[RMDB]
RNA sequence: GGGAACGACUCGAGUAGAGUCGAAAAGAUAUGGAGACGAAGCCGACGAGGGAGAUCGGAAACGAUCUCCUACCCACCGUCGGAACUACUUCGGCUCCUAAGUCAAAGUAUGCCUUCGGGCAUACAACUACCACUUAUACUUCGGUAUAAGUGGUAGAAAAGAAACAACAACAACAAC
Reactivity to 2A3 in 0.01 (KOAc 150mM, MgCl2 10mM, bicine 150mM(pH8.5), 24C), signal-to-noise 3, nucleotides 027 to 126: g100a030u230a100u300g000g000a020g000a000c000g000a010a000g000c000c010g000a000c010g000a030g000g010g000a010g010a000u000c000g020g050a050a040a030c000g000a000u000c000u010c000c000u010a020c020c010c010a040c030c000g000u000c000g010g010a010a020c050u250a030c000u030u000c010g010g010c000u000c000c000u010a100a010g020u020c060a090a060a070g000u010a000u010g000c000c000u050u100c300g080g000g000c010a000u010a000c000a010a010
Reactivity to DMS in 0.01 (KOAc 150mM, MgCl2 10mM, bicine 150mM(pH8.5), 24C), signal-to-noise 5, nucleotides 027 to 126: g000a090u010a300u010g000g020a010g000a010c010g000a010a020g010c010c000g000a020c000g000a130g030g000g010a000g010a010u000c000g000g000a080a120a210c020g000a010u000c000u000c000c010u000a000c020c030c070a300c120c000g000u010c010g000g000a010a020c030u010a300c020u010u000c010g000g000c000u000c010c010u010a010a030g000u010c090a110a080a180g000u000a000u000g000c000c000u000u010c190g040g010g000c000a000u010a000c000a080a210
Structure probing data (2A3 and DMS) for a 177-nucleotide construct. 2A3 is a SHAPE reagent: it acylates the 2'-hydroxyl of flexible nucleotides of all four kinds. For 2A3 the reverse transcriptase was SuperScript II with manganese. The reactions ran in a buffer of 150 mM KOAc, 10 mM MgCl2 and 150 mM bicine (pH 8.5), at 24 C. The DMS profile rests on 5,216 reads. Reactivities are given for positions 27 through 126.